Source: RMDB library TTRDES, as collected in RNAgym. This 177-nucleotide RNA was probed chemically with DMS and 2A3. For 2A3 the reverse transcriptase was SuperScript II with manganese. For DMS the reverse transcriptase was MarathonRT. For 2A3, 3,677 sequencing reads were counted. The RNA was probed in 150 mM KOAc, 10 mM MgCl2 and 150 mM bicine (pH 8.5) at 24 C.
RNA sequence: GGGAACGACUCGAGUAGAGUCGAAAAAAAAAAAGAUAUGGAACGAACUACAACAAUGUAGGACGUUGAAAUAGGCUCGGAAACGAGCCUAUGGAGUCCUACUAGUUGCGUUCCUAAGUCAAAAAAAGUAACAUUCUAAGUUCGCUUAGAAUGUUACAAAAGAAACAACAACAACAAC
Reactivity to DMS in 0.01 (KOAc 150mM, MgCl2 10mM, bicine 150mM(pH8.5), 24C), signal-to-noise 2, nucleotides 027 to 126: a030a010a020a050a030a120a130g000a020u000a240u020g000g010a010a000c000g000a070a040c080u010a280c020a010a010c020a060a120u020g010u000a000g000g000a020c000g030u000u010g000a070a120a000u000a010g000g000c000u000c000g020g010a040a030a120c000g010a020g000c000c000u000a000u000g000g010a030g020u000c000c000u000a000c010u000a130g010u000u010g000c000g010u000u000c000c000u000a030a050g000u030c020a000a010a030a100a050a090a110
Reactivity to 2A3 in 0.01 (KOAc 150mM, MgCl2 10mM, bicine 150mM(pH8.5), 24C), signal-to-noise 2, nucleotides 027 to 126: a040a000a030a010a020a010a010g050a020u120a040u120g010g000a010a040c010g010a050a030c090u300a050c230a130a040c000a120a090u260g020u010a010g000g000a000c050g100u240u030g000a010a000a000u010a000g020g020c030u000c030g040g020a050a110a030c000g000a000g000c010c000u010a000u000g000g000a000g000u010c000c000u010a010c000u000a000g000u000u050g040c000g000u000u030c010c000u010a080a010g000u000c040a030a020a120a120a040a090a060